Structure probing data (DMS and 2A3) for a 177-nucleotide construct.
The reactions ran in a buffer of 150 mM KOAc, 10 mM MgCl2 and 150 mM bicine (pH 8.5), at 24 C.
It was measured as part of the RMDB library OK2TST.
[RMDB]
RNA sequence: GGGAACGACUCGAGUAGAGUCGAAAAGCGUACCCUGGAACUCUGGAUGAAAACUCAUCACAAAUUUAUAUGGAAGCAUCUGACAUUUGCCCCAGGAGAUGCCUUUACUCCAACCUUCAAGGAAUUAGCGGUAAUUAAUGUUCGCAUUAAUUACCGCAAAAGAAACAACAACAACAAC
Reactivity to DMS in 0.01 (KOAc 150mM, MgCl2 10mM, bicine 150mM(pH8.5), 24C), signal-to-noise 1, nucleotides 027 to 126: g000c170g100u000a100c020c020c020u000g000g010a120a040c030u010c160u010g010g000a060u020g000a020a150a140a140c090u020c040a030u020c020a200c100a040a040a100u000u000u010a110u010a140u010g000g000a100a100g000c020a010u000c020u000g000a060c080a120u010u000u010g020c020c020c000c030a090g000g000a040g020a010u000g020c020c020u000u000u020a060c060u000c020c020a050a140c100c060u000u000c090a000a030g000g010a040a180u030u010a140
Reactivity to 2A3 in 0.01 (KOAc 150mM, MgCl2 10mM, bicine 150mM(pH8.5), 24C), signal-to-noise 1, nucleotides 027 to 126: g060c000g000u020a020c010c010c000u010g060g000a060a040c020u110c050u220g060g030a070u070g070a050a050a070a050c130u070c040a050u080c020a040c050a070a170a060u120u300u090a190u040a050u160g080g000a150a020g070c000a010u010c050u070g050a080c020a100u120u180u230g150c070c000c000c000a000g000g010a010g020a000u080g020c010c000u000u150u100a020c020u000c020c010a060a000c000c000u220u200c020a010a020g050g000a120a150u130u100a120